[RMDB]
RNA sequence: GGGAACGACUCGAGUAGAGUCGAAAAGACCGCAGAAGCGGAAACGGCGAAAACGUGCGGAAGAAUACGCACGAGCGGAAGUCUGGAUAGCGACCGAGAGGUCGCAACGCCGAAUCAUCCAGAAGAACAUUUAGGGAUCGUUCGCGAUCCCUAAAUGAAAAGAAACAACAACAACAAC
Reactivity to 2A3 in 0.01 (KOAc 150mM, MgCl2 10mM, bicine 150mM(pH8.5), 24C), signal-to-noise 5, nucleotides 027 to 126: g050a010c000c000g000c030a090g050a300a040g070c010g040g000a050a070a000c020g010g000c010g020a000a030a020a110c000g000u010g010c010g050g040a120a080g140a150a140u220a030c010g000c010a000c000g010a030g000c080g080g040a080a010g060u000c010u020g000g010a010u030a030g000c000g000a000c000c000g040a050g010a010g080g000u010c000g000c000a000a000c010g000c000c000g000a020a040u110c010a000u000c020c010a010g000a050a010g040a070a030
Reactivity to DMS in 0.01 (KOAc 150mM, MgCl2 10mM, bicine 150mM(pH8.5), 24C), signal-to-noise 3, nucleotides 027 to 126: g000a140c010c000g000c020a100g020a190a120g010c070g010g000a080a040a110c060g000g000c010g020a230a070a090a110c000g000u000g000c000g000g040a100a200g000a230a120u030a070c000g010c000a010c000g000a090g000c140g020g000a090a110g010u020c000u010g000g010a000u000a060g030c010g000a000c010c000g000a210g000a210g010g000u020c000g010c000a000a000c060g000c010c010g010a060a080u030c110a040u010c000c000a000g010a030a080g010a120a170